[RMDB]
RNA sequence: GGGAACGACUCGAGUAGAGUCGAAAAGAUCUUAGGUUCGCCUAAGAUCAAAAGAGCUAGCAAGGUUCAGCUAGCAAAGAUCGAAAGAUCAAAUGAACCAAUAAAGGAUAAAGUUCGCUUUAUCCAACAAACCAAACUUGUUCGCAAGUUUGGUUUGAAAAGAAACAACAACAACAAC
Reactivity to 2A3 in 0.01 (KOAc 150mM, MgCl2 10mM, bicine 150mM(pH8.5), 24C), signal-to-noise 2, nucleotides 027 to 126: g000a000u010c000u010u000a010g010g040u040u040c150g080c000c000u010a000a000g000a000u000c000a000a000a010a020g010a010g010c000u000a000g000c040a290a150g000g000u000u010c010a000g000c000u010a000g000c000a040a120a000g000a000u030c020g040a050a040a020g010a010u020c000a010a000a000u030g010a000a000c020c000a010a070u230a100a050a040g010g000a010u000a010a010a000g000u010u050c190g060c100u010u000u000a010u000c000c010a020a020
Reactivity to DMS in 0.01 (KOAc 150mM, MgCl2 10mM, bicine 150mM(pH8.5), 24C), signal-to-noise 1, nucleotides 027 to 126: g000a000u000c000u000u000a000g000g010u020u010c260g030c010c000u010a010a010g000a010u010c010a050a020a130a160g000a150g010c000u000a000g020c010a090a070g020g010u030u010c010a050g010c000u000a000g020c000a040a090a030g000a010u000c010g010a180a110a130g000a000u000c000a020a020a110u010g000a010a000c000c010a110a110u020a040a060a110g000g000a030u000a020a010a010g020u000u030c280g000c020u000u000u010a010u000c010c000a080a150
Chemical mapping of a 177-nucleotide RNA with 2A3 and DMS. The data come from the RNA Mapping Database (RMDB), library M2PK50. The DMS profile rests on 1,086 reads. DMS adducts were read by reverse transcription with MarathonRT. The RNA was probed in 150 mM KOAc, 10 mM MgCl2 and 150 mM bicine (pH 8.5) at 24 C.